[RMDB]
RNA sequence: GGGAACGACUCGAGUAGAGUCGAAAAACGAGUGAGUUACGACUCACUCGACUUUUAAUGCUACCCAAAGGUCGUGACAAAUCGAUAAAACGCAGAGUCAAAAAGUCCGACGUUACGACGUCGGACAACGAGCGAGUUCUGUUCGCAGAACUCGCAAGCCUUCCUGAUAGUUCGCUAUCAGGAAGGCAAAAGAAACAACAACAACAAC
Reactivity to 2A3 in 0.01 (KOAc 150mM, MgCl2 10mM, bicine 150mM(pH8.5), 24C), signal-to-noise 1, nucleotides 027 to 156: a000c020g000a010g000u000g000a000g010u000u060a110c170g090a030c030u000c000a010c010u010c000g000a010c000u030u120u040u230a130a110u160g040c000u020a050c010c020c000a040a050a000g120g000u020c010g000u030g030a110c040a040a170a030u100c030g060a070u140a130a070a030a010c050g000c040a050g060a050g100u160c060a010a000a100a100a050g000u000c000c000g000a000c000g010u000u030a030c220g010a000c000g060u000c000g000g010a000c000a000a000c000g030a000g010c000g000a000g000u000u000c000u000g070u040u030c120g000c020a000g000a000a000c000u020c010g000c000a000a000